Background: Structure probing data (DMS and 2A3) for a 177-nucleotide construct. Values cover nucleotides 27 to 126. 2A3 adducts were read by reverse transcription with SuperScript II with manganese. For 2A3, 818 sequencing reads were counted.
RNA sequence: GGGAACGACUCGAGUAGAGUCGAAAAGGAGAUCGAAGAAGACCGACGUCAGCACGGUCUGGAUGUAGGUCCGCAUGCAUCCCAGUUGACGAAACUUGACGAUUUCCAAAGCGGACAAGAAGUCAAACGUGACUAUCGAGUUCGCUCGAUAGUCACGAAAAGAAACAACAACAACAAC
Reactivity to DMS in 0.01 (KOAc 150mM, MgCl2 10mM, bicine 150mM(pH8.5), 24C), signal-to-noise 1, nucleotides 027 to 126: g000g000a080g020a000u080c020g010a200a130g060a200a030g020a130c000c000g040a300c090g010u030c160a180g000c170a180c000g000g120u000c090u000g000g070a000u010g020u010a080g000g020u010c000c000g000c000a090u000g010c000a000u040c000c000c200a010g000u000u000g000a090c120g000a270a110a060c000u000u000g030a090c130g020a040u000u000u010c050c000a100a290a090g010c000g030g000a060c000a140a020g100a030a170g000u030c050a000a000a180
Reactivity to 2A3 in 0.01 (KOAc 150mM, MgCl2 10mM, bicine 150mM(pH8.5), 24C), signal-to-noise 1, nucleotides 027 to 126: g000g020a020g000a000u050c020g030a080a040g050a060a070g010a080c000c020g030a120c010g070u180c080a030g010c220a000c000g020g000u060c000u030g010g000a000u020g000u000a000g010g040u000c000c000g000c000a000u010g000c010a000u010c000c000c000a000g030u000u050g050a110c200g040a050a060a000c000u000u050g040a030c000g000a010u020u000u000c000c000a000a120a000g010c030g030g030a000c000a010a010g140a140a040g030u050c000a180a000a000
The DMS profile rests on 888 reads. The reactions ran in a buffer of 150 mM KOAc, 10 mM MgCl2 and 150 mM bicine (pH 8.5), at 24 C. It was measured as part of the RMDB library OK1LIB.